[RMDB]
RNA sequence: GGGAACGACUCGAGUAGAGUCGAAAAUACACUGCUCAGCCCCCGGCCCAGCCGCCGGCGCAGUCCGGGUCGCAACAAUCGCACCAGGGCCCAUCCACGCCACCUACCGGCUUUCCGAGCUUCAGCCAGCUUUGCUGGCAUUCGUGCCAGCAAAGCUAAAAGAAACAACAACAACAAC
Reactivity to DMS in 0.01 (KOAc 150mM, MgCl2 10mM, bicine 150mM(pH8.5), 24C), signal-to-noise 1, nucleotides 027 to 126: u000a170c110a080c020u000g000c020u000c030a110g010c070c010c050c050c000g030g000c050c030c050a120g000c000c100g020c050c020g000g010c020g030c080a090g000u020c050c050g000g010g010u010c130g000c070a080a090c160a030a070u000c140g000c000a010c030c030a100g010g030g040c030c010c050a070u000c060c040a050c060g010c050c020a050c070c050u000a040c130c020g010g000c070u000u000u000c010c010g120a040g000c050u000u010c060a000g000c160c050
This 177-nucleotide RNA was probed chemically with DMS. The RNA was probed in 150 mM KOAc, 10 mM MgCl2 and 150 mM bicine (pH 8.5) at 24 C.